[RMDB]
RNA sequence: GGGAACGACUCGAGUAGAGUCGAAAAAUGAAUCGUCCCGUUGUGGAGGCCUACGAGCCGGGAUCGGUCUUUAAAGUCUUUACCAUGGCCGCCAUGCUUGAGGCGAACGUCAUCGAUCCAGGGGAGAGUUUGUUUAUAGAUUCGUCUAUAAACAAACAAAAGAAACAACAACAACAAC
Reactivity to DMS in 0.01 (KOAc 150mM, MgCl2 10mM, bicine 150mM(pH8.5), 24C), signal-to-noise 9, nucleotides 027 to 126: a070u000g010a070a060u000c070g010u010c010c010c020g020u000u010g030u010g010g010a100g010g000c010c010u000a140c110g010a150g020c030c060g010g000g010a070u000c030g020g010u010c030u000u000u010a090a100a180g010u000c120u000u010u000a070c180c070a090u000g010g010c040c040g000c020c010a040u000g000c100u000u000g000a050g010g010c000g010a040a080c150g000u000c050a040u000c040g010a070u000c020c020a090g010g000g000g010a200g010a130
Reactivity to 2A3 in 0.01 (KOAc 150mM, MgCl2 10mM, bicine 150mM(pH8.5), 24C), signal-to-noise 5, nucleotides 027 to 126: a000u100g040a030a050u060c050g020u010c030c010c010g010u050u110g020u040g030g050a070g040g000c010c020u090a140c070g020a040g010c030c010g010g000g000a100u200c010g000g060u020c000u030u190u110a120a120a020g030u030c000u020u110u040a080c050c030a060u070g010g000c060c020g000c040c010a020u050g020c020u030u060g030a040g010g000c040g020a050a020c060g080u070c010a050u070c030g030a030u030c010c020a030g010g000g010g000a110g010a030